Overview: The data come from the RNA Mapping Database (RMDB), library OK3TST. An RNA of 207 nucleotides, treated with 2A3 and read out base by base. 2A3 adducts were read by reverse transcription with SuperScript II with manganese. Reactivities are given for positions 27 through 156.

[RMDB]
RNA sequence: GGGAACGACUCGAGUAGAGUCGAAAAAGCAAGACCCAAACAGCAUAUGAACGAUCAUUUAUAUAUGUGCCAGACGUCGAGCGUAUGUAUAGCUGGGACGGCCAAGCGGGAGGAAUAGAAGGGCUAAACCAAUACACGUGGGUGUAUGCCUAUAUCCGAGCGAAUUAGAGUUCGCUCUAAUUCGCUCAAAAGAAACAACAACAACAAC
Reactivity to 2A3 in 0.01 (KOAc 150mM, MgCl2 10mM, bicine 150mM(pH8.5), 24C), signal-to-noise 1, nucleotides 027 to 156: a040g080c030a050a000g000a050c000c000c000a000a070a000c070a000g040c000a000u070a030u200g050a000a040c010g050a050u110c010a130u180u240u000a170u000a100u020a020u130g020u010g000c000c040a030g020a250c010g050u070c050g050a000g000c040g040u050a060u190g120u000a020u090a000g000c050u020g000g050g010a060c020g000g000c000c010a000a130g020c130g020g000g050a030g000g000a030a020u130a070g110a100a090g060g060g000c000u000a020a020a020c000c040a020a020u070a160c010a000c080g010u090g070g000g040u000g040u030a000u120g000c000c000u160a180u060a020u210c020c150